Structure probing data (DMS and 2A3) for a 177-nucleotide construct.
The 2A3 profile rests on 7,278 reads.
The RNA was probed in 150 mM KOAc, 10 mM MgCl2 and 150 mM bicine (pH 8.5) at 24 C.
The DMS profile rests on 10,563 reads.
For DMS the reverse transcriptase was MarathonRT.
Source: RMDB library OK1LIB, as collected in RNAgym.
RNA sequence: GGGAACGACUCGAGUAGAGUCGAAAAACCAUCGACCUCAACGAGUACGGCAAUGAAGCCUCCGUCGUUGUCAAAGGUGUACUCCGGUAAUGGACCUCCAUCCUCCAGUGCGUGAAGCAUGGGAGCCUGUGGCUCCCUAGUUCGCUAGGGAGCCACAAAAAGAAACAACAACAACAAC
Reactivity to DMS in 0.01 (KOAc 150mM, MgCl2 10mM, bicine 150mM(pH8.5), 24C), signal-to-noise 5, nucleotides 027 to 126: a120c070c050a100u010c120g000a050c050c000u010c070a070a060c080g000a040g010u010a040c110g000g010c030a080a070u030g010a070a060g010c020c010u020c070c040g000u000c030g020u000u010g000u000c030a100a120a110g010g000u010g010u030a050c020u010c000c090g000g000u020a070a050u010g000g000a120c050c030u000c010c020a080u030c100c000u000c020c010a140g020u010g010c030g010u010g030a160a160g000c020a020u020g000g000g000a040g000c160c110
Reactivity to 2A3 in 0.01 (KOAc 150mM, MgCl2 10mM, bicine 150mM(pH8.5), 24C), signal-to-noise 8, nucleotides 027 to 126: a000c020c000a050u060c050g050a010c000c020u070c060a070a040c050g020a010g040u090a060c050g020g000c030a040a100u160g070a140a050g050c020c020u030c030c030g100u040c010g010u020u010g040u030c050a120a100a100g050g020u050g060u050a030c010u020c030c020g000g030u110a080a090u070g070g030a070c010c000u040c030c020a130u050c010c020u010c010c020a040g010u010g030c030g030u140g290a150a020g010c000a020u030g020g020g010a010g030c010c060